[RMDB]
RNA sequence: GGGAACGACUCGAGUAGAGUCGAAAACUUUGAACGUUCGCGUUCAAAGAAACCUCUAAGCAGAUUGGCGAGGACGACGCUGCGGAGCGCGUUUGCCUAUAAAAAGCGUAGGCUUCGGCCUACGCAACAAUCCCGGAGAGUUCGCUCUCCGGGAUUGAAAAGAAACAACAACAACAAC
Reactivity to DMS in 0.01 (KOAc 150mM, MgCl2 10mM, bicine 150mM(pH8.5), 24C), signal-to-noise 1, nucleotides 027 to 126: c000u020u000u020g000a010a000c000g010u000u010c200g020c010g020u000u020c000a000a000a020g000a090a080a150c030c000u000c060u010a080a100g020c100a150g040a110u000u030g020g000c040g020a100g000g000a200c060g010a080c050g030c000u000g050c120g000g010a030g000c030g000c030g020u000u000u000g030c010c000u010a160u050a020a060a080a130a040g020c000g020u000a000g020g020c000u000u020c140g080g030c000c000u000a000c000g010c000a030a070
Reactivity to 2A3 in 0.01 (KOAc 150mM, MgCl2 10mM, bicine 150mM(pH8.5), 24C), signal-to-noise 1, nucleotides 027 to 126: c010u070u000u080g010a020a020c010g010u020u020c240g000c000g070u000u000c020a040a000a040g000a020a030a000c020c030u000c050u170a090a060g000c050a050g080a300u190u220g090g020c020g040a090g060g050a030c050g020a060c000g060c030u090g010c030g110g130a040g000c120g020c030g010u020u020u050g090c010c010u040a060u140a110a040a010a020a030g000c000g000u000a030g010g000c040u050u040c190g020g000c020c010u030a000c000g000c000a000a000